[RMDB]
Structure probing data (2A3) for a 207-nucleotide construct.
RNA sequence: GGGAACGACUCGAGUAGAGUCGAAAAGUGUAGCGUCACUUUGAUGGCGGUACUAUGAAUUGAUGCAAGGUGUGGAGCGACCUUAAACAGUUCUGGUGGUCCUCUGAAUGGAGUGCUCUACUGAGAUUUAACUUAUGCACGUUCGCGUGCAUAAGAAGGACAACGCGUAGUUCGCUACGCGUUGUCCAAAAGAAACAACAACAACAAC
Reactivity to 2A3 in 0.01 (KOAc 150mM, MgCl2 10mM, bicine 150mM(pH8.5), 24C), signal-to-noise 2, nucleotides 027 to 156: g000u050g030u020a010g110c000g100u010c000a020c050u170u120u300g220a270u050g050g000c040g030g090u020a030c010u050a020u150g030a080a040u150u000g010a070u160g040c080a060a040g030g000u020g050u130g040g000a070g000c000g020a000c000c000u060u070a040a120a010c000a050g030u010u010c030u030g000g000u000g000g000u040c000c000u010c010u020g120a020a060u250g010g000a010g020u000g040c000u000c010u090a020c020u100g030a010g030a130u050u110u200a060a020c000u000u000a000u000g000c000a000c000g020u070u020c130g010c040g040u000g000c000a000u000a000a000g000a000a000

The data come from the RNA Mapping Database (RMDB), library M2RFPK.
The RNA was probed in 150 mM KOAc, 10 mM MgCl2 and 150 mM bicine (pH 8.5) at 24 C.